The record gives the reactivity of an RNA of 177 nucleotides to DMS. The RNA was probed in 150 mM KOAc, 10 mM MgCl2 and 150 mM bicine (pH 8.5) at 24 C. It was measured as part of the RMDB library M2PK50.
RNA sequence: GGGAACGACUCGAGUAGAGUCGAAAAUCCGCGUGGUUCGCCACGCGGAAAAUUAUAAUCGCUAGAAAACGAUCAAAACUAGCGAAAUACAUAACGAUCGAAAAAGGGUACCCUUCGGGGUACCCAACAUAAGUGCUAACUUCGGUUAGCACUUAUGAAAAGAAACAACAACAACAAC
Reactivity to DMS in 0.01 (KOAc 150mM, MgCl2 10mM, bicine 150mM(pH8.5), 24C), signal-to-noise 1, nucleotides 027 to 126: u000c000c000g050c040g130u000g030g010u010u010c240g000c010c000a000c010g030c080g000g010a000a000a140a060u000u040a050u000a070a060u000c000g030c000u000a010g000a050a030a080a000c000g000a010u010c040a230a060a090a080c000u000a010g010c000g000a000a060a060u000a060c200a080u000a030a160c180g010a020u000c010g010a110a090a110a130a170g010g000g000u000a000c030c010c000u000u000c170g010g010g000g020u000a010c000c000c000a020a060